Structure probing data (2A3 and DMS) for a 177-nucleotide construct.
DMS adducts were read by reverse transcription with MarathonRT.
Conditions: 150 mM KOAc, 10 mM MgCl2 and 150 mM bicine (pH 8.5), 24 C.
For 2A3 the reverse transcriptase was SuperScript II with manganese.
In probing experiments dimethyl sulfate is read out at A N1 and C N3, which are open when not base-paired.

RNA sequence: GGGAACGACUCGAGUAGAGUCGAAAAUGGGAGCCUACCAGAAGAGCCGCUUAAACAGAGAAGCAUUUACAAAAGACAUCAUGAAAUACUCCACACCGAUAACAGUAGGCAUCGUCGAUUGUGACACCUGUUGUGAGAAGUUCGCUUCUCACAACAGAAAAGAAACAACAACAACAAC
Reactivity to 2A3 in 0.01 (KOAc 150mM, MgCl2 10mM, bicine 150mM(pH8.5), 24C), signal-to-noise 4, nucleotides 027 to 126: u090g010g020g000a000g020c000c000u030a040c020c010a050g040a080a020g060a060g040c000c000g030c080u110u150a090a160a040c090a010g140a010g000a110a020g000c010a010u070u110u100a170c100a050a090a040a040g060a050c020a060u040c000a000u210g040a080a050a000u070a070c010u010c020c000a010c000a010c010c020g040a040u110a220a000c030a020g070u060a030g040g000c000a050u030c030g040u010c020g060a190u020u160g040u040g050a030c020a050c030
Reactivity to DMS in 0.01 (KOAc 150mM, MgCl2 10mM, bicine 150mM(pH8.5), 24C), signal-to-noise 3, nucleotides 027 to 126: u000g000g000g000a150g000c070c030u020a020c030c000a040g020a050a040g000a140g010c040c040g040c070u000u020a070a110a120c150a230g000a130g000a090a080g030c070a070u010u000u030a070c110a090a010a090a150g000a080c060a080u020c070a030u000g000a020a060a050u050a060c080u000c020c050a030c040a070c040c050g000a060u030a040a110c120a070g010u000a040g020g020c020a060u070c100g000u000c030g000a150u010u020g010u000g000a110c190a090c230